[RMDB]
The record gives the reactivity of an RNA of 177 nucleotides to 2A3. 2A3 adducts were read by reverse transcription with SuperScript II with manganese. Reactivities are given for positions 27 through 126.
RNA sequence: GGGAACGACUCGAGUAGAGUCGAAAAGUAUGACUACACUCAGUGUGAGAGUGUGUGGUAAAAUGCGAACAACAUCGUCUCACUAAUAAAUUUUCACCAUAGAAAAAAAACUCAAUGUGUGCAGGAAGCGCAUCCAGUGAUUCGUCACUGGAUGCGCAAAAGAAACAACAACAACAAC
Reactivity to 2A3 in 0.01 (KOAc 150mM, MgCl2 10mM, bicine 150mM(pH8.5), 24C), signal-to-noise 1, nucleotides 027 to 126: g010u000a030u300g010a060c020u030a020c030a000c000u110c050a150g000u020g050u040g180a010g000a000g030u010g000u000g090u000g000g010u070a000a000a000a270u210g120c040g000a080a000c030a000a060c000a090u300c010g030u020c050u000c000a000c000u040a050a300u230a030a110a130u130u090u000u050c060a090c000c000a030u090a140g220a020a010a010a010a010a000a010a010c060u000c040a120a070u140g040u000g000u040g040c040a060g010g020a020a020